[RMDB]
RNA sequence: GGGAACGACUCGAGUAGAGUCGAAAAACCAUCCUAUUCGUAGGAUGGUGCACCAUUGCCGAUUGUAAAUAAUACCGCAGGCGGAAAAGCGGUUCAAAUAAGGAACUUGUCAGUUCGCUGACAAGAAAAGAAAGUAAGACUUCGGUCUUACUUUCUUAAAAGAAACAACAACAACAAC
Reactivity to DMS in 0.01 (KOAc 150mM, MgCl2 10mM, bicine 150mM(pH8.5), 24C), signal-to-noise 5, nucleotides 027 to 126: a020c000c000a000u010c010c000u000a020u000u010c170g030u000a010g010g010a020u000g000g010u000g020c150a170c030c010a140u000u010g010c030c020g000a180u000u010g010u010a050a090a090u010a070a100u000a040c010c010g020c010a090g020g010c060g020g000a060a040a070a100g000c020g000g010u010u000c140a060a060a090u000a090a110g010g010a110a140c000u000u000g010u000c000a010g010u000u010c260g010c000u000g000a010c000a010a000g000a060a080
Reactivity to 2A3 in 0.01 (KOAc 150mM, MgCl2 10mM, bicine 150mM(pH8.5), 24C), signal-to-noise 2, nucleotides 027 to 126: a000c010c010a010u010c020c000u030a030u070u090c210g040u060a010g010g010a000u000g000g000u010g010c010a050c060c000a110u030u240g050c010c010g090a090u090u100g090u140a040a100a130u090a040a130u060a100c010c000g000c040a060g140g010c000g020g080a080a110a050a020g020c000g010g000u040u090c050a040a090a070u200a160a110g090g000a040a080c000u000u000g000u000c000a010g020u010u090c160g000c110u010g010a000c000a000a000g020a000a090
Source: RMDB library M2PK50, as collected in RNAgym.
Structure probing data (DMS and 2A3) for a 177-nucleotide construct.
2A3 adducts were read by reverse transcription with SuperScript II with manganese.
The reactions ran in a buffer of 150 mM KOAc, 10 mM MgCl2 and 150 mM bicine (pH 8.5), at 24 C.
The 2A3 profile rests on 2,103 reads.